[RMDB]
Structure probing data (DMS and 2A3) for a 177-nucleotide construct. Conditions: 150 mM KOAc, 10 mM MgCl2 and 150 mM bicine (pH 8.5), 24 C. The DMS profile rests on 13,478 reads. DMS adducts were read by reverse transcription with MarathonRT. The data come from the RNA Mapping Database (RMDB), library TTRDES.
RNA sequence: GGGAACGACUCGAGUAGAGUCGAAAAGAUAUGGAUAAAUCACGAACUCAUCGAUCAAUACUCGGAAACGAGUAUUGGGAGAGUUUGUGAGUUUAUCCUAAGUCAAAGCUAACGUUCGCGUUAGCAACUAUUAUUAUUGCUUCGGCAAUAAUAAUAGAAAAGAAACAACAACAACAAC
Reactivity to DMS in 0.01 (KOAc 150mM, MgCl2 10mM, bicine 150mM(pH8.5), 24C), signal-to-noise 8, nucleotides 027 to 126: g000a060u010a300u010g010g000a020u000a010a020a050u000c000a010c010g010a010a010c000u000c000a300u000c180g000a090u010c010a010a010u000a000c000u000c000g000g000a120a120a170c000g010a020g000u000a000u000u000g010g010g010a030g010a020g010u000u000u000g020u000g000a020g010u010u000u000a000u000c000c000u010a040a120g010u000c040a130a130a170g010c010u000a000a010c000g020u000u020c300g030c020g010u000u000a000g010c000a080a120
Reactivity to 2A3 in 0.01 (KOAc 150mM, MgCl2 10mM, bicine 150mM(pH8.5), 24C), signal-to-noise 6, nucleotides 027 to 126: g040a010u100a050u170g000g000a010u010a020a020a010u030c000a000c020g010a010a000c000u010c020a270u300c190g110a070u090c010a010a000u000a000c000u000c010g040g020a080a080a040c010g010a000g000u000a010u000u010g000g010g010a050g000a000g000u010u000u010g000u010g020a010g010u000u020u010a000u000c000c000u010a110a030g020u020c070a180a080a030g000c000u010a000a030c010g060u070u140c300g000c010g140u010u010a000g000c000a010a000